RNA sequence: GGGAACGACUCGAGUAGAGUCGAAAAGUACGAUUUUUCGAAAUCGUACGAAGGUCAGGUGGCAGCACCAGGACACUGGUCGCGGCGACCGAGCCGAACAGAAUAUGUGUAAUUUCGAUUACACAAAGACUACAUCAUUUUUCGAAAUGAUGUAGUCAAAAGAAACAACAACAACAAC
Reactivity to 2A3 in 0.01 (KOAc 150mM, MgCl2 10mM, bicine 150mM(pH8.5), 24C), signal-to-noise 8, nucleotides 027 to 126: g000u000a000c000g000a000u000u020u010u020u130c120g090a020a000a000u000c000g000u000a000c000g010a110a010g010g020u100c060a010g020g000u040g130g000c010a000g000c000a010c010c010a010g020g020a090c130a090c240u010g000g030u060c140g000c010g020g020c000g040a010c010c000g000a020g000c000c020g000a020a000c020a010g250a150a050u250a100u170g010u000g010u000a000a020u020u090u150c250g060a020u000u020a010c010a000c010a000a050a010
Reactivity to DMS in 0.01 (KOAc 150mM, MgCl2 10mM, bicine 150mM(pH8.5), 24C), signal-to-noise 8, nucleotides 027 to 126: g000u000a000c000g010a010u000u000u000u010u030c160g020a020a000a010u000c000g000u000a010c000g020a090a090g000g010u000c050a260g020g010u000g000g020c010a030g020c010a030c000c000a010g000g010a180c300a100c010u000g010g010u000c140g050c000g010g020c000g000a010c000c010g000a300g010c000c000g010a060a110c190a100g010a100a080u000a090u000g010u000g010u000a010a010u010u000u020c190g020a030u000u000a000c000a000c000a040a090a140
Structure probing data (2A3 and DMS) for a 177-nucleotide construct. The DMS profile rests on 9,697 reads. The reactions ran in a buffer of 150 mM KOAc, 10 mM MgCl2 and 150 mM bicine (pH 8.5), at 24 C. Source: RMDB library M2PK50, as collected in RNAgym.